[RMDB]
RNA sequence: GGGAACGACUCGAGUAGAGUCGAAAAUGAAAUAUUUUACAAAAGUCUGAAUCAAUCGAACCUUGCUUUACCUUUUGAUCAAAGUGUAAAUCCAGUUUCGUUUAGCAUGAUCUCAUCGCAUUAGCUCAUCGCAUGAUGUCAUGCUAAAGUUGGAUGAACGUGUCAGCUAAUUCGUUAGCUGACACGUAAAAGAAACAACAACAACAAC
Reactivity to 2A3 in 0.01 (KOAc 150mM, MgCl2 10mM, bicine 150mM(pH8.5), 24C), signal-to-noise 1, nucleotides 027 to 156: u120g030a060a030a010u300a080u150u240u170u110a060c050a040a130a060a030g060u000c050u150g080a100a070u180c050a010a060u120c000g000a000a000c000c030u020u010g040c020u010u000u010a030c000c000u030u030u000u160g100a060u080c040a030a000a030g060u120g000u120a010a010a000u010c000c030a000g000u000u000u040c040g030u010u000u070a000g010c000a000u000g000a000u000c000u020c040a010u030c050g010c060a030u030u190a080g050c090u090c120a140u140c080g010c000a000u010g000a050u030g010u000c010a010u030g000c010u000a000a000a000g000u010u030g080g000a010u050g030a000